[RMDB]
RNA sequence: GGGAACGACUCGAGUAGAGUCGAAAAGAUAUGGACAUCGCAGAUAUACGACCUCAACAGCUCGGAAACGAGACAUGAGGGCCGUAUGUAGAUGUCCUAAGUCAAAACGCAAGGUUCGCCUUGCGAAGGCCAAUAAAUCGUUCGCGAUUUAUUGGCCAAAAGAAACAACAACAACAAC
Reactivity to DMS in 0.01 (KOAc 150mM, MgCl2 10mM, bicine 150mM(pH8.5), 24C), signal-to-noise 2, nucleotides 027 to 126: g020a070u000a300u010g030g010a010c030a000u000c000g030c210a200g020a030u010a070u000a050c030g000a060c000c020u020c020a050a050c120a050g000c010u000c000g010g000a080a070a190c000g000a010g030a010c070a130u040g000a070g000g000g000c110c000g010u000a010u000g000u010a080g000a000u000g010u000c000c010u000a010a060g010u010c040a080a050a080a160c020g020c000a020a010g000g010u000u000c230g020c000c000u010u010g010c010g010a030a030
Reactivity to 2A3 in 0.01 (KOAc 150mM, MgCl2 10mM, bicine 150mM(pH8.5), 24C), signal-to-noise 2, nucleotides 027 to 126: g040a000u040a070u200g030g000a020c000a010u010c010g060c250a050g080a200u100a000u010a190c020g010a040c000c000u000c010a030a160c000a180g040c010u000c000g060g000a060a040a030c000g000a020g040a030c020a080u080g000a010g020g050g000c140c010g010u000a010u020g020u010a060g020a000u010g000u000c000c000u000a010a000g050u000c030a020a000a060a070c020g020c010a000a010g010g010u050u090c240g120c150c000u000u000g000c010g010a020a050